[RMDB]
RNA sequence: GGGAACGACUCGAGUAGAGUCGAAAAACGCUACCUUUCGAGGUAGCGUCACCUACUUCGCGCAACCGUCGAGUCGUUCCCAUGGUUGCGUGAAGUAGUUAGAGUGGCAGACGUUCGCGUCUGCCAACUUUCGUUAGUACUUCGGUACUAACGAAAGAAAAGAAACAACAACAACAAC
Reactivity to DMS in 0.01 (KOAc 150mM, MgCl2 10mM, bicine 150mM(pH8.5), 24C), signal-to-noise 2, nucleotides 027 to 126: a020c000g000c010u000a000c000c010u000u000u010c180g010a010g010g020u000a000g010c000g030u010c060a060c140c000u000a000c010u000u000c010g020c000g000c000a010a010c000c010g000u010c240g000a040g020u000c000g020u000u000c000c000c000a020u000g000g020u000u000g000c000g030u000g000a020a020g000u000a000g000u000u010a070g010a140g030u010g030g010c000a010g000a030c000g020u010u000c180g030c010g020u000c000u000g010c000c000a010a020
Reactivity to 2A3 in 0.01 (KOAc 150mM, MgCl2 10mM, bicine 150mM(pH8.5), 24C), signal-to-noise 1, nucleotides 027 to 126: a010c000g000c000u000a010c000c000u070u070u090c210g140a010g000g000u010a010g000c000g010u000c000a010c000c000u000a020c000u000u020c000g000c000g000c000a000a010c000c010g240u260c140g080a010g030u010c000g010u000u010c000c000c000a010u010g000g000u000u000g000c000g010u010g020a000a000g000u000a000g000u020u140a030g000a060g030u070g000g020c000a000g000a000c000g020u010u070c220g010c000g080u000c000u000g000c000c000a000a000